Overview
An RNA of 177 nucleotides, treated with DMS and 2A3 and read out base by base. For 2A3 the reverse transcriptase was SuperScript II with manganese. For 2A3, 901 sequencing reads were counted. For DMS the reverse transcriptase was MarathonRT. Source: RMDB library OK2TST, as collected in RNAgym. Conditions: 150 mM KOAc, 10 mM MgCl2 and 150 mM bicine (pH 8.5), 24 C.
RNA sequence: GGGAACGACUCGAGUAGAGUCGAAAAAUCUGUGAACCUGAUGAGGAUGUAAUAACUACCAGAUAUGAUUUAGUUCAAGCAAAACAUUUAGCUAUGCUUAAUGAUUACUAUAACUUUUCGGUUGCAGCCAUGCGGAAAUUUUCGAAUUUCCGCAUGGAAAAGAAACAACAACAACAAC
Reactivity to DMS in 0.01 (KOAc 150mM, MgCl2 10mM, bicine 150mM(pH8.5), 24C), signal-to-noise 1, nucleotides 027 to 126: a080u000c020u020g040u000g050a020a080c020c010u000g020a020u000g010a060g000g000a170u020g010u000a040a040u000a010a130c050u010a060c300c080a050g010a090u000a030u000g000a100u000u000u000a110g000u000u010c140a060a050g000c070a070a110a170a130c090a040u000u000u010a080g010c000u000a140u010g020c000u010u000a000a100u010g000a110u010u000a050c020u000a170u000a080a150c020u000u000u000u000c030g000g010u020u000g000c010a040g000
Reactivity to 2A3 in 0.01 (KOAc 150mM, MgCl2 10mM, bicine 150mM(pH8.5), 24C), signal-to-noise 1, nucleotides 027 to 126: a000u000c010u000g020u020g120a050a060c000c040u060g010a050u000g000a010g010g000a020u150g010u050a030a110u030a060a060c040u090a030c030c060a060g070a190u120a140u180g080a050u080u060u120a000g080u000u030c040a070a000g030c030a060a000a040a120c060a030u080u070u090a040g000c050u080a070u210g070c020u000u000a000a010u020g080a020u070u050a010c030u060a020u060a290a100c000u080u000u050u020c020g030g030u000u020g010c020a040g030